[RMDB]
This 207-nucleotide RNA was probed chemically with 2A3 and DMS. The RNA was probed in 150 mM KOAc, 10 mM MgCl2 and 150 mM bicine (pH 8.5) at 24 C. The 2A3 profile rests on 4,366 reads. It was measured as part of the RMDB library M2RFPK. For DMS, 4,456 sequencing reads were counted.
RNA sequence: GGGAACGACUCGAGUAGAGUCGAAAAGACUGAUGUAGAGUUCAGUUGGAGCGACAAGUAUUUAGCUUGAGAUAGCUAAAUCACCUCGGUAUGAUUAGGGUGAGACCUAGGAACCGUAGGGGUAUUCAAUGCUGUAUUGCGUUCGCGCAAUACAGAACGACUCGUAUAGUUUCGACUAUACGAGUCGAAAAGAAACAACAACAACAAC
Reactivity to 2A3 in 0.01 (KOAc 150mM, MgCl2 10mM, bicine 150mM(pH8.5), 24C), signal-to-noise 5, nucleotides 027 to 156: g030a000c020u020g010a030u070g080u240a090g030a050g140u050u020c020a000g000u020u030g080g040a090g080c100g130a100c050a070a010g040u080a060u000u010u010a000g000c000u020u010g020a030g010a080u120a030g000c000u000a000a000a010u010c000a020c000c000u020c000g010g010u300a230u160g040a040u010u020a000g020g010g020u060g090a080g020a050c000c000u000a010g010g010a010a020c000c010g010u040a040g000g020g010g000u020a060u050u160c080a080a130u140g040c010u000g000u000a000u000u000g010c000g000u020u040c230g000c010g010c100a000a000u000a000c000a000g000a020a030
Reactivity to DMS in 0.01 (KOAc 150mM, MgCl2 10mM, bicine 150mM(pH8.5), 24C), signal-to-noise 2, nucleotides 027 to 156: g030a090c000u010g000a000u000g020u000a130g000a190g010u000u000c000a040g020u000u000g020g020a120g000c060g010a050c060a040a050g010u000a070u010u000u000a010g010c010u000u010g000a200g000a190u010a040g010c010u010a000a000a020u000c030a050c030c000u000c000g000g050u000a050u020g000a200u010u010a040g020g030g010u020g030a300g010a150c000c010u000a050g020g010a090a060c020c020g000u010a080g050g040g000g040u020a060u000u000c080a040a130u000g010c010u000g010u010a020u000u000g020c000g010u000u010c300g080c050g010c000a000a010u000a010c000a000g010a030a150